[RMDB]
RNA sequence: GGGAACGACUCGAGUAGAGUCGAAAAAGCUCAGACAAAGCCUAGCGCUUGGGGUACACGUGCACGUCUUUGAGCCAGCCGUUGCCAGCAGGGUUUGUUUGUGGCGCUGCCACCAAGAACGGUUACGGUUACCUCCUGAGUUCGCUCAGGAGGUAACAAAAGAAACAACAACAACAAC
Reactivity to DMS in 0.01 (KOAc 150mM, MgCl2 10mM, bicine 150mM(pH8.5), 24C), signal-to-noise 2, nucleotides 027 to 126: a120g010c020u000c020a050g010a090c040a070a090a070g000c030c010u000a080g020c090g000c140u010u000g030g010g000g030u000a060c120a030c030g020u020g010c040a090c200g010u000c010u010u020u010g000a100g010c050c070a180g010c020c020g020u010u000g010c020c020a190g000c030a070g000g030g000u000u020u000g010u000u000u000g010u000g000g000c020g000c190u010g010c040c020a060c050c080a030a050g020a070a080c040g010g020u000u000a020c210g000
Reactivity to 2A3 in 0.01 (KOAc 150mM, MgCl2 10mM, bicine 150mM(pH8.5), 24C), signal-to-noise 2, nucleotides 027 to 126: a020g010c000u010c030a030g000a050c030a000a040a040g110c000c000u050a110g000c020g090c100u120u070g170g000g040g060u050a060c030a000c080g050u060g040c020a020c120g060u040c060u120u050u180g090a060g000c010c000a010g000c020c010g010u030u070g010c040c050a030g000c020a030g020g010g000u020u060u020g070u080u020u020g060u110g050g000c090g070c160u100g010c000c040a050c030c000a040a020g040a170a030c090g140g000u170u120a030c040g030